[RMDB]
RNA sequence: GGGAACGACUCGAGUAGAGUCGAAAAGGGAACAACUGCAGAAAGGUUUAGCCACAAGGAAGACAAGGAGUCUGAUUUGGGAGUGUUUAGAUGCCUGUUAGGUGUCCUAGUGGAGCUCGCAAGUAGGCAUAUUAAGUUACUUCGGUAACUUAAUAUGAAAAGAAACAACAACAACAAC
Reactivity to 2A3 in 0.01 (KOAc 150mM, MgCl2 10mM, bicine 150mM(pH8.5), 24C), signal-to-noise 9, nucleotides 027 to 126: g030g010g010a040a020c030a030a010c040u070g000c050a020g100a090a100a030g060g000u050u090u110a020g010c010c000a030c020a030a030g040g010a030a030g030a030c030a040a070g110g010a040g060u010c030u060g070a110u060u060u080g060g020g010a050g020u070g030u040u080u060a030g010a020u040g020c000c000u080g110u220u150a050g000g020u030g010u020c010c010u020a030g030u040g050g020a040g020c020u020c030g040c020a020a050g040u060a030g090g000
Reactivity to DMS in 0.01 (KOAc 150mM, MgCl2 10mM, bicine 150mM(pH8.5), 24C), signal-to-noise 9, nucleotides 027 to 126: g010g010g010a080a060c080a060a070c060u000g010c060a070g010a080a100a080g010g010u000u000u000a100g010c020c030a060c080a070a070g000g010a110a050g000a050c060a080a100g010g010a110g010u000c030u010g000a160u000u000u000g010g000g010a050g010u000g000u000u000u000a060g010a030u000g000c020c010u000g010u000u010a040g020g020u000g010u000c020c050u000a070g020u000g010g010a120g010c040u000c060g010c080a040a060g010u000a050g010g000